[RMDB]
RNA sequence: GGGAACGACUCGAGUAGAGUCGAAAAGUACUAUGAUAGUUGCAUAGUUCAGCAGAUUGAAUCAUCAAGAGAUUUAAUAUUUGUCUGAUGUAUCUAAAAUGUCAUAUCUGGUUCGCCAGAUAUGACAGAUAUCGCUAUUCUUCGGAAUAGCGAUAUCAAAAGAAACAACAACAACAAC
Reactivity to 2A3 in 0.01 (KOAc 150mM, MgCl2 10mM, bicine 150mM(pH8.5), 24C), signal-to-noise 3, nucleotides 027 to 126: g040u030a010c000u010a010u040g070a100u120a220g160u130u160g080c010a000u020a030g010u040u040c010a000g000c000a000g010a080u040u070g030a040a030u030c020a020u080c080a160a040g090a020g000a220u020u060u100a090a050u130a130u090u140u080g090u010c020u020g020a030u070g060u070a070u020c030u050a070a090a100a130u080g000u010c000a010u010a000u010c000u010g000g030u030u050c110g030c020c000a000g000a000u010a000u000g000a000c000a000
Reactivity to DMS in 0.01 (KOAc 150mM, MgCl2 10mM, bicine 150mM(pH8.5), 24C), signal-to-noise 3, nucleotides 027 to 126: g020u000a090c020u000a030u010g000a150u010a110g000u010u010g020c010a020u000a020g010u000u010c000a020g000c010a040g000a020u000u000g010a010a010u000c000a050u010c190a120a190g010a150g000a010u000u000u000a020a050u010a050u000u000u000g010u000c010u000g000a030u010g000u000a030u010c060u000a040a040a080a170u000g010u000c000a010u000a000u000c000u000g010g000u000u000c260g020c000c000a010g010a000u000a000u000g000a010c000a000
An RNA of 177 nucleotides, treated with 2A3 and DMS and read out base by base. The reactions ran in a buffer of 150 mM KOAc, 10 mM MgCl2 and 150 mM bicine (pH 8.5), at 24 C. It was measured as part of the RMDB library RFMREP. Values cover nucleotides 27 to 126. As a SHAPE reagent, 2A3 marks flexible, mostly unpaired nucleotides at the ribose 2'-OH. Reactivities are rounded to 0.1 and cut off at 0 and 3. For DMS, 3,379 sequencing reads were counted.